[RMDB]
RNA sequence: GGGAACGACUCGAGUAGAGUCGAAAAUAAGCGACGGCUAGUCUGUCAGACCGGGAACGCCCUCGGCCCGGACCCUGGCAUCAGCUAGAGGGAUCCACCGAUGAGUCCGGUCGCGGGACUCCUCGGGACAACCACAGCGACUGGGAUCGUCAUCUCGCUAAGUAGAUUAGUUCGCUAAUCUACUUAGAAAAGAAACAACAACAACAAC
Reactivity to 2A3 in 0.01 (KOAc 150mM, MgCl2 10mM, bicine 150mM(pH8.5), 24C), signal-to-noise 2, nucleotides 027 to 156: u220a040a040g070c060g070a060c060g060g110c090u050a030g060u060c060u040g020u010c000a010g020a050c010c000g000g000g000a040a010c010g000c000c000c000u010c030g040g000c000c000c020g020g000a040c130c040c000u000g020g000c030a120u080c100a120g090c080u190a070g020a000g030g020g000a030u080c100c060a020c000c000g000a010u010g000a000g010u010c010c010g040g000u030c030g000c000g010g000g000a000c000u000c000c020u000c000g010g000g010a020c030a030a040c130c040a020c020a060g010c010g000a010c020u030g060g000g000a080u070c080g060u070c110a050u030c040u000c010g000